[RMDB]
RNA sequence: GGGAACGACUCGAGUAGAGUCGAAAACAGGGACAUCCUUUUAUCAUCGGGAAUACGAAAGAAAAGGGAGAAUAAACGUCUUACUUAUAGAACAGUGAAGAAUGCCACAAUUUUACGCUUUGAAAAUUGGAAAUCAUUAUUUCGAUAAUGAUUUCCAAAAAGAAACAACAACAACAAC
Reactivity to 2A3 in 0.01 (KOAc 150mM, MgCl2 10mM, bicine 150mM(pH8.5), 24C), signal-to-noise 4, nucleotides 027 to 126: c010a040g060g020g030a010c010a110u050c010c000u090u040u000u030a210u060c060a030u010c020g000g000g100a110a160u220a180c020g010a090a040a090g030a030a060a020a000g060g060g040a040g100a050a110u210a060a090a030c060g030u020c000u030u050a080c000u030u110a070u020a110g020a140a030c060a030g010u010g070a050a080g050a060a050u050g060c050c010a050c000a040a030u020u050u090u090a030c020g000c030u090u040u030g080a060a100a090a090u070
Reactivity to DMS in 0.01 (KOAc 150mM, MgCl2 10mM, bicine 150mM(pH8.5), 24C), signal-to-noise 3, nucleotides 027 to 126: c100a170g020g000g010a050c090a100u010c030c000u000u000u010u000a090u010c080a200u000c020g000g010g010a120a110u030a130c050g000a050a090a110g000a040a010a040a020g000g000g000a050g000a050a080u020a060a090a100c090g010u010c010u000u030a050c070u020u020a140u010a130g030a080a050c130a040g000u020g010a020a060g000a040a040u010g010c050c060a040c100a060a060u030u020u000u010a070c100g010c110u000u020u020g020a060a030a050a100u000
This 177-nucleotide RNA was probed chemically with 2A3 and DMS. DMS adducts were read by reverse transcription with MarathonRT. Conditions: 150 mM KOAc, 10 mM MgCl2 and 150 mM bicine (pH 8.5), 24 C. Reactivities are given for positions 27 through 126.